[RMDB]
RNA sequence: GGGAACGACUCGAGUAGAGUCGAAAAUGAUCCGUUCGCGGAUCAAAAAAUCCUAAGUCACAGGACCGCAUUCAGGAGCAACAGCUCAUCGGAAACGAUGAGACAUGCUCCUGAUGCGAGAAUGUGAUAUGGAAAAAAAGCCUGUUUCGACAGGCAACUAUGUUUAGGCGUUCGCGCCUAAACAUAGAAAAGAAACAACAACAACAAC
Reactivity to 2A3 in 0.01 (KOAc 150mM, MgCl2 10mM, bicine 150mM(pH8.5), 24C), signal-to-noise 2, nucleotides 027 to 156: u100g000a000u000c020c000g000u030u020c220g020c040g120g020a010u040c050a050a000a000a000a020a140u040c030c000u060a110a030g030u000c020a000c000a000g020g010a010c000c000g020c010a030u220u260c010a080g000g000a020g000c000a010a070c030a110g020c020u000c000a000u000c020g030g030a090a130a040c010g000a000u010g000a000g010a020c000a060u020g010c000u050c010c000u000g000a010u000g010c000g000a000g010a000a000u000g010u000g020a000u000a050u020g010g030a100a030a070a020a040a090a020g000c000c000u020g060u000u100u070c200g100a030c000a000g010g000c010a000a020